[RMDB]
RNA sequence: GGGAACGACUCGAGUAGAGUCGAAAAUCGUAACGCUGGGGUACUUCCUCAGUAUUACGGAGUCAUCACUGGUGGUUCGCCUCAGAAUCUGACCGAGCUGAUUAACUUGGCGCUGGAGAACCAGAAGCUGGACUGCAACCUUCGGGUUGCAGUCCAGAAAAGAAACAACAACAACAAC
Reactivity to 2A3 in 0.01 (KOAc 150mM, MgCl2 10mM, bicine 150mM(pH8.5), 24C), signal-to-noise 1, nucleotides 027 to 126: u100c000g000u000a000a000c040g010c000u000g000g000g000g010u260a300c050u300u280c000c000u020c000a000g000u000a000u000u000a000c000g040g040a070g050u020c090a020u080c000a140c050u000g230g000u030g000g080u050u050c000g100c020c000u020c000a010g000a160a120u150c090u060g000a080c000c000g070a000g000c000u100g050a060u160u070a250a000c120u000u060g000g000c030g000c100u070g010g020a050g030a140a060c000c020a000g050a000a020g020
Conditions: 150 mM KOAc, 10 mM MgCl2 and 150 mM bicine (pH 8.5), 24 C. An RNA of 177 nucleotides, treated with 2A3 and read out base by base. For 2A3 the reverse transcriptase was SuperScript II with manganese. 2A3 is a SHAPE reagent: it acylates the 2'-hydroxyl of flexible nucleotides of all four kinds. For 2A3, 396 sequencing reads were counted. Reactivities are given for positions 27 through 126.